This 307-nucleotide RNA was probed chemically with DMS and 2A3. The RNA was probed in 150 mM KOAc, 10 mM MgCl2 and 150 mM bicine (pH 8.5) at 24 C. The DMS profile rests on 4,953 reads. Source: RMDB library POS240, as collected in RNAgym.
[RMDB]
RNA sequence: GGGAACGACUCGAGUAGAGUCGAAAAACCUCAGAAAGAGGAGAAAAGACUAUAUUUUCAGGGAUCAUUUCUACAGUGCACUACUAGAGAAGUUUCUGUGAACUUGUAGAGCACCGGAAACCAUGAGCAGGAAGUGCAGCGUUCUCUCCUGAGCAUGAAGCCGGCUCUUGGUGUGGCUUCGCUGCAACUGCCAUUGGCCAUUGAUGAUCGUUCUUCUCUUCUCUGGGAGAGUAAGAGAGAGAGGACACAGUCUGAGUGGAAAAAGAACCAUGACAUUCGUGUCAUGGAAAAGAAACAACAACAACAAC
Reactivity to DMS in 0.01 (KOAc 150mM, MgCl2 10mM, bicine 150mM(pH8.5), 24C), signal-to-noise 2, nucleotides 027 to 266: a090c070c000u000c060a050g030a030a080a130g010a040g000g000a050g000a050a090a110a150g010a160c080u000a120u010a060u000u000u020u000c090a110g020g040g000a060u000c030a030u000u000u010c060u000a150c110a070g010u000g000c030a110c010u000a010c040u000a070g020a280g030a090a130g000u000u000u010c160u030g020u000g000a120a100c010u000u000g020u010a000g000a070g020c030a020c040c050g020g040a070a090a230c040c040a010u010g000a120g020c000a010g000g010a110a130g010u010g000c000a010g000c010g000u000u010c000u000c000u000c000c000u000g000a020g000c010a090u010g040a060a060g020c150c220g010g000c010u000c050u030u010g000g010u000g000u010g010g010c190u000u000c050g000c030u000g000c020a050a070c000u000g010c010c010a000u000u000g020g020c020c060a040u000u000g010a080u000g000a010u010c060g010u020u000c000u020u000c010u000c000u000u000c080u000c020u010g010g000g000a060g010a080g000u000a050a030g000a090g010a060g000a010g000a020g010g010a020c110a090c090a120g000u020c040u000g010a080g000u000g000g000a040a030a070a100a160g000a110a160
Reactivity to 2A3 in 0.01 (KOAc 150mM, MgCl2 10mM, bicine 150mM(pH8.5), 24C), signal-to-noise 3, nucleotides 027 to 266: a010c020c010u040c030a050g090a090a140a030g010a020g020g000a030g010a060a110a040a020g020a020c060u080a070u080a240u300u110u140u070c090a060g030g030g010a050u050c010a040u080u100u040c080u060a130c070a060g020u020g010c000a010c050u040a010c040u100a040g030a010g100a290a090g170u180u260u160c190u150g160u040g020a070a040c010u000u020g000u000a000g010a020g000c000a020c010c010g050g030a060a040a000c010c000a000u000g000a010g000c000a000g020g110a240a070g150u060g050c000a020g000c040g010u040u010c050u000c000u000c020c000u010g000a000g010c000a040u140g210a120a070g190c160c090g160g020c020u030c010u100u180g000g040u040g010u050g110g060c170u050u010c010g000c000u000g000c010a010a030c010u010g020c010c000a030u060u140g040g020c020c020a070u050u110g010a030u020g010a020u020c020g050u050u000c000u040u000c010u000c000u080u070c040u000c000u040g020g090g020a180g000a000g050u130a170a010g040a010g010a000g000a010g010a020g050g040a020c050a020c070a110g030u070c090u060g030a050g070u230g060g020a110a070a070a000a050g110a020a040